[RMDB]
RNA sequence: GGGAACGACUCGAGUAGAGUCGAAAAGCAUCAUCAUGUUGUACAUGAUAUACAUGUACAGUUUUAUACAUCAAUUUAAGGAGUAAAUAAAUUUGGCCGGUGUGGUGGCUGGAUCACACAUGUAAUCGUCUGAUUCUUGAUUCGUCAAGAAUCAGACAAAAGAAACAACAACAACAAC
Reactivity to DMS in 0.01 (KOAc 150mM, MgCl2 10mM, bicine 150mM(pH8.5), 24C), signal-to-noise 1, nucleotides 027 to 126: g010c010a040u000c110a050u010c060a100u000g040u000u000g020u000a070c030a000u000g010a150u010a110u000a200c010a060u000g020u000a030c000a020g010u000u010u010u030a120u010a080c020a070u030c020a080a090u010u000u020a100a050g000g010a120g070u000a030a040a080u010a020a070a060u010u000u000g020g020c060c060g010g010u030g010u000g010g030u010g010g030c030u000g000g000a020u000c030a040c040a060c030a090u030g010u010a100a120u010c160
Reactivity to 2A3 in 0.01 (KOAc 150mM, MgCl2 10mM, bicine 150mM(pH8.5), 24C), signal-to-noise 1, nucleotides 027 to 126: g050c000a070u100c000a030u010c000a040u100g030u080u010g030u120a010c010a030u000g100a030u150a050u030a260c000a000u010g000u000a000c010a000g000u060u040u060u090a100u000a090c050a070u020c050a110a150u000u090u260a080a050g040g040a030g060u130a070a070a140u100a000a100a070u070u080u090g080g000c020c020g070g000u020g010u000g040g080u000g020g030c100u040g010g000a020u000c000a000c030a020c020a050u110g090u090a140a150u090c060
An RNA of 177 nucleotides, treated with DMS and 2A3 and read out base by base.
It was measured as part of the RMDB library OK2TST.
The reactions ran in a buffer of 150 mM KOAc, 10 mM MgCl2 and 150 mM bicine (pH 8.5), at 24 C.